This 177-nucleotide RNA was probed chemically with DMS and 2A3. High 2A3 reactivity points to a flexible backbone, as in loops and unpaired stretches. It was measured as part of the RMDB library TTRDES. The reactions ran in a buffer of 150 mM KOAc, 10 mM MgCl2 and 150 mM bicine (pH 8.5), at 24 C. For 2A3, 2,591 sequencing reads were counted.

RNA sequence: GGGAACGACUCGAGUAGAGUCGAAAAGAUAUGGACGUAAUGCUCUUUUGACGCUCGGGAGUGUCGGAAACGACACAGAGCGAUAAGAGCGUUACGUCCUAAGUCAAAACGGCACUUCGGUGCCGAAGCAACAUGAUCUCUUCGGAGAUCAUGUUGCAAAAGAAACAACAACAACAAC
Reactivity to DMS in 0.01 (KOAc 150mM, MgCl2 10mM, bicine 150mM(pH8.5), 24C), signal-to-noise 1, nucleotides 027 to 126: g000a030u000a300u000g000g040a020c010g000u010a000a000u000g010c000u000c000u000u000u000u000g040a250c070g030c000u000c000g000g040g020a180g020u000g030u000c030g000g000a140a120a210c000g000a010c000a000c000a020g030a020g020c000g020a070u010a000a010g000a010g010c000g010u000u000a010c000g000u000c000c000u000a000a100g000u020c030a100a110a140a140c030g000g000c000a000c000u000u080c190g010g010u000g030c000c000g000a000a080
Reactivity to 2A3 in 0.01 (KOAc 150mM, MgCl2 10mM, bicine 150mM(pH8.5), 24C), signal-to-noise 1, nucleotides 027 to 126: g000a050u030a020u140g000g010a000c000g000u000a020a000u030g000c000u000c040u030u240u100u280g300a100c020g000c000u020c040g040g030g200a300g020u010g010u000c010g000g030a110a140a030c000g040a000c000a000c010a020g010a010g000c000g010a000u010a020a010g010a000g040c010g000u000u000a010c010g000u000c000c000u000a000a000g000u020c000a020a000a020a060c020g010g000c000a010c040u070u150c300g150g000u000g050c010c000g000a000a010